Annotation:
Conditions: 150 mM KOAc, 10 mM MgCl2 and 150 mM bicine (pH 8.5), 24 C. The record gives the reactivity of an RNA of 177 nucleotides to DMS and 2A3. 2A3 is a SHAPE reagent: it acylates the 2'-hydroxyl of flexible nucleotides of all four kinds. For DMS, 1,567 sequencing reads were counted. Reactivities are rounded to 0.1 and cut off at 0 and 3.
RNA sequence: GGGAACGACUCGAGUAGAGUCGAAAAGAUAUGGAGAAGGAUGCAUACUCGUUGAAAUCUAUCGGAAACGAUAGAUGGAGAGUCCAUCUUCUCCUAAGUCAAACCAUCCGUGUUCGCACGGAUGGAACUACCCAUGUCUGUUCGCAGACAUGGGUAGAAAAGAAACAACAACAACAAC
Reactivity to DMS in 0.01 (KOAc 150mM, MgCl2 10mM, bicine 150mM(pH8.5), 24C), signal-to-noise 2, nucleotides 027 to 126: g020a010u030a200u010g010g010a020g020a050a020g010g020a130u000g010c300a090u010a300c010u000c010g010u010u000g000a090a090a030u010c000u000a000u000c010g000g010a090a010a090c010g020a000u000a010g020a000u000g000g000a040g010a010g010u000c300c120a130u000c010u000u010c010u000c000c020u000a010a060g000u000c010a090a100a140c000c000a000u000c010c000g020u020g010u000u020c160g050c010a010c010g000g000a000u000g010g000a020a080
Reactivity to 2A3 in 0.01 (KOAc 150mM, MgCl2 10mM, bicine 150mM(pH8.5), 24C), signal-to-noise 3, nucleotides 027 to 126: g020a020u070a010u130g000g020a010g000a040a020g210g160a060u180g070c120a170u240a300c010u020c010g240u300u030g000a010a010a010u010c020u000a000u000c000g010g020a050a000a010c010g010a000u010a010g000a020u000g000g000a020g000a000g010u000c030c000a140u070c000u000u010c000u000c000c000u030a040a000g000u000c070a110a050a090c000c010a000u000c000c000g020u020g100u070u110c300g040c180a010c000g000g010a000u000g000g000a020a020